An RNA of 207 nucleotides, treated with 2A3 and read out base by base. For 2A3, 610 sequencing reads were counted. It was measured as part of the RMDB library M2RFPK. For 2A3 the reverse transcriptase was SuperScript II with manganese.
[RMDB]
RNA sequence: GGGAACGACUCGAGUAGAGUCGAAAACAAUCAACAAUAUGGUUUGUGUAGUUAUGCUGAAAAUCGUUGAGGUUGUAUGGAAUAGGUUAAACGUAAGACCUUAAGUUGAAAAACUUUAAAAUUAAUCAAAAUCAUGUACACUUCGGUGUACAUGAAAGACAGCACUACUGUUCGCAGUAGUGCUGUCAAAAGAAACAACAACAACAAC
Reactivity to 2A3 in 0.01 (KOAc 150mM, MgCl2 10mM, bicine 150mM(pH8.5), 24C), signal-to-noise 2, nucleotides 027 to 156: c040a000a120u200c090a050a050c010a010a110u100a140u130g070g020u020u070u100g030u090g000u040a100g020u060u080a090u120g050c070u190g090a080a020a020a050u040c030g010u020u020g020a030g030g020u010u060g020u040a140u130g020g020a080a090u040a030g000g000u030u040a060a120a000c020g020u040a030a030g010a040c000c000u000u040a000a000g010u030u000g030a050a080a000a000a000c010u090u170u120a030a070a150a090u180u190a130a230u090c010a100a100a000a100u050c000a000u000g010u010a000c010a000c040u000u070c170g020g010u000g000u000a000c010a000u000g000a000a000a000